The record gives the reactivity of an RNA of 177 nucleotides to DMS and 2A3. The data come from the RNA Mapping Database (RMDB), library TTRDES. DMS adducts were read by reverse transcription with MarathonRT. 2A3 adducts were read by reverse transcription with SuperScript II with manganese. The reactions ran in a buffer of 150 mM KOAc, 10 mM MgCl2 and 150 mM bicine (pH 8.5), at 24 C. The DMS profile rests on 1,028 reads.

RNA sequence: GGGAACGACUCGAGUAGAGUCGAAAAAAAAGAUAUGGACAUACGAACUACGAACGAAGUACCGAAGAACGCUUGUCGGAAACGACAAGCGGGAGGUAUGGGAUUUCGCGUAUGUCCUAAGUCAAAACGGCUAUAGUAAGUUCGCUUACUAUAGCCGAAAAGAAACAACAACAACAAC
Reactivity to DMS in 0.01 (KOAc 150mM, MgCl2 10mM, bicine 150mM(pH8.5), 24C), signal-to-noise 1, nucleotides 027 to 126: a050a090a040a110g010a040u000a300u010g000g020a000c010a000u000a020c000g030a090a070c140u020a300c000g020a050a010c020g030a160a170g020u010a000c000c000g000a080a120g000a170a170c080g000c000u020u000g010u000c000g020g020a040a010a110c000g000a020c000a000a000g000c000g000g000g000a000g010g020u000a000u010g000g000g010a210u000u020u000c000g030c000g030u000a000u000g000u000c000c000u010a020a030g030u000c020a060a070a150a140
Reactivity to 2A3 in 0.01 (KOAc 150mM, MgCl2 10mM, bicine 150mM(pH8.5), 24C), signal-to-noise 1, nucleotides 027 to 126: a010a000a090a010g050a030u080a060u130g000g000a000c000a010u030a000c000g040a180a090c100u220a040c300g020a000a010c010g010a020a030g020u020a030c000c010g190a240a050g040a060a000c000g010c010u010u010g000u000c000g000g000a070a070a060c020g010a010c000a000a000g040c000g000g000g000a010g040g000u060a010u170g000g030g110a300u120u160u040c020g000c000g000u020a000u020g000u000c000c000u000a000a010g010u000c030a020a010a120a150